[RMDB]
RNA sequence: GGGAACGACUCGAGUAGAGUCGAAAAAUACAGCGUAAUCGAGCGGAGGAAAACGGCACUCCGAAAAUCCGGUACGAUUAUGAUCCCACUGCGUCGAGGCUAGAUGCAGAACCGGAUUGCCGAGGAAAUGUGUGUUCAAAUUCGUUUGAACACACAUAAAAGAAACAACAACAACAAC
Reactivity to 2A3 in 0.01 (KOAc 150mM, MgCl2 10mM, bicine 150mM(pH8.5), 24C), signal-to-noise 5, nucleotides 027 to 126: a000u170a030c060a030g060c020g060u070a060a020u060c030g020a030g120c030g020g030a020g010g060a080a150a060a040c020g010g000c040a020c040u040c020c000g020a060a030a000a030u000c000c000g020g050u090a080c050g010a040u070u070a040u180g080a030u030c010c010c000a020c020u000g000c000g010u010c010g040a060g120g240c110u130a050g000a020u010g000c010a000g020a030a010c010c000g000g010a020u000u040g010c010c020g030a040g050g110a040a260
Reactivity to DMS in 0.01 (KOAc 150mM, MgCl2 10mM, bicine 150mM(pH8.5), 24C), signal-to-noise 5, nucleotides 027 to 126: a080u010a110c170a090g000c030g010u000a050a060u000c020g020a170g010c020g000g010a050g000g000a040a030a090a140c060g010g010c070a060c070u010c010c010g010a050a070a070a070u000c020c000g010g000u000a120c080g010a040u000u010a040u000g000a090u000c000c000c010a270c030u000g000c010g030u000c000g000a140g010g010c180u010a090g000a030u010g000c000a030g000a150a090c070c010g000g000a020u010u000g000c040c010g000a140g000g010a060a070

The record gives the reactivity of an RNA of 177 nucleotides to 2A3 and DMS. The RNA was probed in 150 mM KOAc, 10 mM MgCl2 and 150 mM bicine (pH 8.5) at 24 C. High DMS reactivity at an A or C suggests that its Watson-Crick edge is free. DMS adducts were read by reverse transcription with MarathonRT. The DMS profile rests on 5,928 reads.